[RMDB]
RNA sequence: GGGAACGACUCGAGUAGAGUCGAAAAGUGAUAACUGAUGAUGGUCACGCAGCCCAUCCCAGACAUGGCUGUUCAAUGAUUUGGACAGCGCUAAACAGGUUGCCUGCUCCUCACCAUUGGCGGGUGCUCUUAUUCACCACUUCGGUGGUGAAUAAGAAAAAGAAACAACAACAACAAC
Reactivity to 2A3 in 0.01 (KOAc 150mM, MgCl2 10mM, bicine 150mM(pH8.5), 24C), signal-to-noise 3, nucleotides 027 to 126: g050u050g060a110u070a250a060c030u040g030a100u070g000a010u070g140g000u070c030a010c100g060c050a070g020c000c000c000a020u010c000c010c000a050g020a140c040a110u140g090g000c000u030g000u010u020c010a010a020u290g170a190u190u040u010g010g000a000c020a000g000c010g020c100u080a170a030a000c040a020g070g030u080u080g040c000c000u010g020c010u020c010c010u050c000a050c000c000a050u010u110g060g000c000g020g030g000u030g010c010
Reactivity to DMS in 0.01 (KOAc 150mM, MgCl2 10mM, bicine 150mM(pH8.5), 24C), signal-to-noise 4, nucleotides 027 to 126: g040u000g010a090u010a100a140c050u010g000a100u000g000a100u000g010g000u000c030a070c120g020c110a070g020c090c020c040a120u000c010c050c030a100g010a100c190a090u000g000g000c000u000g020u000u000c000a020a020u010g010a180u000u010u000g010g010a020c010a010g010c010g030c090u010a040a080a060c170a040g000g000u000u000g020c020c010u010g010c040u000c020c020u000c070a100c040c050a070u000u000g020g010c050g000g020g010u010g000c160